[RMDB]
RNA sequence: GGGAACGACUCGAGUAGAGUCGAAAAACUUAUGCCAUCUUUGCUUACUCACCACAGCUUACACUUGUGUUUCCGGAAGUGAAGAUGAUACUUUUAUUAUACACAUGUUUAGGUUUCAUGUGUACUUCCUUUUACCGUUGUUCGCAACGGUAAAAGGAAAAGAAACAACAACAACAAC
Reactivity to 2A3 in 0.01 (KOAc 150mM, MgCl2 10mM, bicine 150mM(pH8.5), 24C), signal-to-noise 1, nucleotides 027 to 126: a010c030u090u030a040u100g050c020c000a040u000c010u020u010u010g000c000u010u060a210c000u020c010a100c050c000a010c010a010g020c020u120u100a050c010a010c030u040u150g000u000g030u020u090u060c060c030g040g000a000a020g020u000g030a000a000g000a010u000g000a010u050a080c010u050u130u000u080a130u280u060a030u060a010c000a000c000a010u010g020u110u050u070a120g050g010u040u050u060c000a000u040g010u000g010u020a020c000u020u000
Chemical mapping of a 177-nucleotide RNA with 2A3. The data come from the RNA Mapping Database (RMDB), library 15KREP. For 2A3 the reverse transcriptase was SuperScript II with manganese. The RNA was probed in 150 mM KOAc, 10 mM MgCl2 and 150 mM bicine (pH 8.5) at 24 C.